[RMDB]
RNA sequence: GGGAACGACUCGAGUAGAGUCGAAAAAUAAGCACAUGUCCCUCCAUGUGACGUCACGUUCCUUCUUGUUACGUUUAGUAGUGGAACCAACCGGCCUUGGCACGUGGUUAUGGAAAUUGCGUAACUCGCGUGCCGUCAAUUUCGAUUGACGGCACGCAAAAGAAACAACAACAACAAC
Reactivity to DMS in 0.01 (KOAc 150mM, MgCl2 10mM, bicine 150mM(pH8.5), 24C), signal-to-noise 1, nucleotides 027 to 126: a050u000a140a130g020c020a010c030a060u000g000u000c030c040c020u010c300c010a050u000g000u000g000a100c100g000u000c050a110c090g000u000u000c020c010u010u010c070u000u010g030u000u000a000c020g010u000u000u020a140g010u000a040g020u010g040g000a030a050c050c060a040a020c290c050g010g020c060c080u020u010g020g000c060a060c030g030u000g000g000u000u000a060u000g000g000a050a170a120u010u000g000c020g010u000a000a010c020u000c150